[RMDB]
RNA sequence: GGGAACGACUCGAGUAGAGUCGAAAAGAUAUGGAACCAGAUGCGCCAAGUAUAUUCAUGAUCACAAGAGCCUCGGAAACGAGAAGCUCGCAUCGGUUCCUAAGUCAAAGAGGUCUUCGGACCUCAAGCAUAAGGUAAUGUUCGCAUUACCUUAUGCAAAAGAAACAACAACAACAAC
Reactivity to DMS in 0.01 (KOAc 150mM, MgCl2 10mM, bicine 150mM(pH8.5), 24C), signal-to-noise 4, nucleotides 027 to 126: g000a050u010a300u010g000g030a030a010c000c010a150g050a010u010g000c020g020c250c130a070a120g020u000a060u010a080u010u020c140a120u010g010a080u000c080a120c150a090a180g000a030g030c030c000u000c000g010g010a090a100a150c010g010a020g000a070a130g020c020u020c020g020c000a000u000c010g000g000u000u010c000c000u000a010a060g020u020c040a070a120a130g010a000g000g000u000c000u010u020c170g040g000a010c000c010u000c000a010a080
Reactivity to 2A3 in 0.01 (KOAc 150mM, MgCl2 10mM, bicine 150mM(pH8.5), 24C), signal-to-noise 6, nucleotides 027 to 126: g020a000u070a030u150g000g000a020a000c030c080a160g000a040u010g020c050g020c090c090a120a060g140u070a160u080a070u300u300c180a150u270g180a210u170c070a030c020a220a140g020a000g040c000c000u000c010g000g010a120a100a050c010g000a010g040a120a090g020c000u030c070g000c000a010u000c000g000g000u010u010c000c000u010a070a010g010u010c020a020a030a150g000a000g000g000u000c010u050u150c300g120g000a000c000c000u000c010a000a000
Chemical mapping of a 177-nucleotide RNA with DMS and 2A3. For 2A3, 8,640 sequencing reads were counted. For 2A3 the reverse transcriptase was SuperScript II with manganese. The reactions ran in a buffer of 150 mM KOAc, 10 mM MgCl2 and 150 mM bicine (pH 8.5), at 24 C. For DMS the reverse transcriptase was MarathonRT.